This 177-nucleotide RNA was probed chemically with 2A3 and DMS. The 2A3 profile rests on 3,284 reads. For DMS the reverse transcriptase was MarathonRT.
RNA sequence: GGGAACGACUCGAGUAGAGUCGAAAAGAUAUGGACUCAGGGAGCUUAAGUGGUCGGAAACGACCAUGAUGAGCAUCGAUCUGAGGUCCUAAGUCAAAACCAAAAUAGUCUUCGGACUAUUUUGGAAUCCAUUUGGAAUGUUCGCAUUCCAAAUGGAAAAAGAAACAACAACAACAAC
Reactivity to 2A3 in 0.01 (KOAc 150mM, MgCl2 10mM, bicine 150mM(pH8.5), 24C), signal-to-noise 2, nucleotides 027 to 126: g010a010u040a030u110g000g000a000c000u000c010a000g010g000g010a040g000c000u030u000a060a020g010u010g010g000u010c000g000g020a030a050a020c020g000a000c000c020a010u000g010a040u210g000a020g010c010a150u210c010g020a060u070c000u000g030a040g070g080u050c000c000u020a170a020g060u020c020a010a030a110a210c000c000a010a010a000a000u010a000g020u000c000u030u070c300g060g010a000c000u000a000u000u000u000u000g010g010a010a050
Reactivity to DMS in 0.01 (KOAc 150mM, MgCl2 10mM, bicine 150mM(pH8.5), 24C), signal-to-noise 3, nucleotides 027 to 126: g010a010u020a300u000g000g020a230c010u000c010a020g000g000g000a020g020c010u000u020a100a300g000u000g010g000u000c000g000g000a100a080a160c000g000a010c000c000a000u000g000a120u020g010a020g000c100a260u000c180g000a090u000c020u000g000a030g020g000u010c000c000u010a010a130g000u000c020a050a080a120a160c000c000a000a000a010a000u010a000g000u000c000u000u010c210g020g000a010c010u000a010u000u000u000u000g000g000a020a090